Structure probing data (DMS) for a 177-nucleotide construct.
DMS adducts were read by reverse transcription with MarathonRT.
For DMS, 664 sequencing reads were counted.
The reactions ran in a buffer of 150 mM KOAc, 10 mM MgCl2 and 150 mM bicine (pH 8.5), at 24 C.
[RMDB]
RNA sequence: GGGAACGACUCGAGUAGAGUCGAAAACGUAUUCGCGAAAGCCGAGGCCAAAGAAAUCUGCGGAAACGAUAUUCACCAGGUUGGAGACAAUAAGCGGCAGGCUGGCGGUAUCGGCAAUGAAUCCGGCCACUACGGACUCUUUCGAGAGUCCGUAGUGAAAAGAAACAACAACAACAAC
Reactivity to DMS in 0.01 (KOAc 150mM, MgCl2 10mM, bicine 150mM(pH8.5), 24C), signal-to-noise 1, nucleotides 027 to 126: c120g020u000a010u000u010c030g090c140g000a020a100a180g040c060c000g000a130g010g010c030c060a020a090a090g000a110a180a070u000c020u050g010c020g000g000a020a090a140c260g000a050u000a080u000u000c010a040c040c150a040g030g000u000u000g000g000a090g000a100c120a030a060u010a080a100g000c050g020g040c020a030g030g000c030u000g000g020c120g000g040u000a020u000c010g000g020c000a050a100u000g040a070a100u000c050c010g000g000c140